[RMDB]
Chemical mapping of a 177-nucleotide RNA with 2A3 and DMS. Source: RMDB library M2PK50, as collected in RNAgym. For DMS the reverse transcriptase was MarathonRT. 2A3 adducts were read by reverse transcription with SuperScript II with manganese. Reactivities are given for positions 27 through 126. The reactions ran in a buffer of 150 mM KOAc, 10 mM MgCl2 and 150 mM bicine (pH 8.5), at 24 C.
RNA sequence: GGGAACGACUCGAGUAGAGUCGAAAAGUCGCCUCCUUCGGGAGGCGACAAAUACAGAGACUACGCAACUCUGAAAAACACAACAAAACUGUAAAAGCGUAGAAACAUCCACGUUCGCGUGGAUGAAUCAAGUAGUUCUGUUCGCAGAACUACUUGAAAAAGAAACAACAACAACAAC
Reactivity to 2A3 in 0.01 (KOAc 150mM, MgCl2 10mM, bicine 150mM(pH8.5), 24C), signal-to-noise 2, nucleotides 027 to 126: g000u000c000g000c000c000u010c010c030u030u080c120g110g020g010a000g000g000c010g000a000c000a000a000a000u030a000c000a000g010a010g040a060c010u010a000c010g000c020a090a030c020u000c000u000g060a050a000a000a020a000c090a020c050a150a040c030a050a150a070a070c130u140g040u280a030a080a040a040g000c010g000u000a020g050a010a030a000c010a000u000c000c000a010c030g010u040u070c270g000c020g050u000g000g010a010u010g000a000a060
Reactivity to DMS in 0.01 (KOAc 150mM, MgCl2 10mM, bicine 150mM(pH8.5), 24C), signal-to-noise 3, nucleotides 027 to 126: g010u000c010g030c000c000u010c000c010u000u010c200g050g020g020a010g020g030c010g000a000c010a000a050a060u030a170c000a010g010a040g000a080c010u000a010c010g010c030a140a050c000u020c020u000g000a040a080a030a080a070c080a040c110a040a090c140a130a110a090a160c150u010g000u010a060a050a090a040g000c010g010u000a010g000a300a060a270c000a000u000c000c000a000c010g020u000u010c170g020c010g030u000g030g000a000u000g000a060a090